Conditions: 150 mM KOAc, 10 mM MgCl2 and 150 mM bicine (pH 8.5), 24 C. This 177-nucleotide RNA was probed chemically with 2A3 and DMS. It was measured as part of the RMDB library OK2TRN. The 2A3 profile rests on 55,245 reads.
[RMDB]
RNA sequence: GGGAACGACUCGAGUAGAGUCGAAAACUGCUGUCCCUGGCAAGCGGGUGGCACAAUCCUGAAGCAUGCGGAUGUCAGCUAAGGCGGAGUACGCGGUGCGGGCGAUGGUCCAGCUCGCCACGGCCGCGGCUUAUUAUCUUUUCGAAGAUAAUAAGCCAAAAGAAACAACAACAACAAC
Reactivity to 2A3 in 0.01 (KOAc 150mM, MgCl2 10mM, bicine 150mM(pH8.5), 24C), signal-to-noise 9, nucleotides 027 to 126: c020u040g010c020u030g030u080c010c000c000u020g110g030c040a050a030g090c050g020g030g020u040g040g000c030a010c020a070a080u060c010c010u050g040a040a010g050c050a050u110g040c020g050g070a060u070g060u120c040a010g010c040u070a080a050g050g000c020g010g030a040g050u090a070c060g000c010g040g040u110g160c000g000g010g000c010g030a050u060g030g060u050c030c010a020g030c010u010c000g000c010c010a070c010g010g000c000c010g010c010
Reactivity to DMS in 0.01 (KOAc 150mM, MgCl2 10mM, bicine 150mM(pH8.5), 24C), signal-to-noise 9, nucleotides 027 to 126: c120u000g010c040u000g010u000c020c030c010u000g000g010c180a080a080g020c090g010g000g020u000g000g010c050a050c110a100a100u010c030c020u000g000a120a120g010c050a060u000g010c070g010g000a080u000g000u000c050a060g010c050u010a080a090g010g010c050g000g000a110g010u010a120c110g010c010g010g020u000g010c010g000g000g010c010g010a040u000g010g000u000c050c050a100g000c090u000c020g000c000c020a060c040g010g000c010c030g010c030